About this RNA
Structure probing data (2A3 and DMS) for a 207-nucleotide construct. High DMS reactivity at an A or C suggests that its Watson-Crick edge is free. It was measured as part of the RMDB library OK3TST.
RNA sequence: GGGAACGACUCGAGUAGAGUCGAAAACAAAGACACUACAGCUGCCUGAAGUUAGUGCUUUAGGAUAUGGAGCAUAAAGAGAGGAAGAGAUGAGAUCCACUUGGAUACCAGCACCCCACUCCAGCCUCGAGGAAGCUUUUACACAGUCUGCCAUGGACAGUGAUAAUCAUUUCGAUGAUUAUCACUGAAAAGAAACAACAACAACAAC
Reactivity to 2A3 in 0.01 (KOAc 150mM, MgCl2 10mM, bicine 150mM(pH8.5), 24C), signal-to-noise 5, nucleotides 027 to 156: c030a010a090a020g080a020c030a020c070u120a070c030a030g010c020u060g040c030c000u030g020a060a020g020u060u120a050g050u150g150c020u040u040u050a040g000g020a010u060a090u210g040g020a020g000c040a030u160a110a150a000g100a020g020a040g050g020a060a080g050a020g010a080u090g070a070g020a100u000c010c010a090c190u120u240g020g000a020u060a140c030c000a000g010c030a100c020c010c010c010a030c020u000c010c000a050g020c000c020u030c040g010a010g010g020a050a000g000c000u030u030u020u070a050c090a010c000a010g030u010c010u040g000c040c020a040u050g030g000a020
Reactivity to DMS in 0.01 (KOAc 150mM, MgCl2 10mM, bicine 150mM(pH8.5), 24C), signal-to-noise 2, nucleotides 027 to 156: c100a120a120a070g000a090c030a080c040u010a140c060a120g010c010u000g020c010c020u010g000a040a070g000u000u000a080g020u000g010c030u000u000u000a050g030g020a170u000a040u000g020g010a050g020c040a080u000a050a120a110g000a160g010a120g030g000a170a090g010a080g020a130u010g010a080g000a100u000c020c040a140c100u000u000g030g000a080u000a040c040c010a070g000c050a090c030c030c040c030a080c050u000c020c000a100g000c020c000u010c050g030a130g010g010a130a070g030c020u010u000u020u000a060c080a090c020a090g000u000c010u000g030c020c030a170u000g010g020a230
The reactions ran in a buffer of 150 mM KOAc, 10 mM MgCl2 and 150 mM bicine (pH 8.5), at 24 C.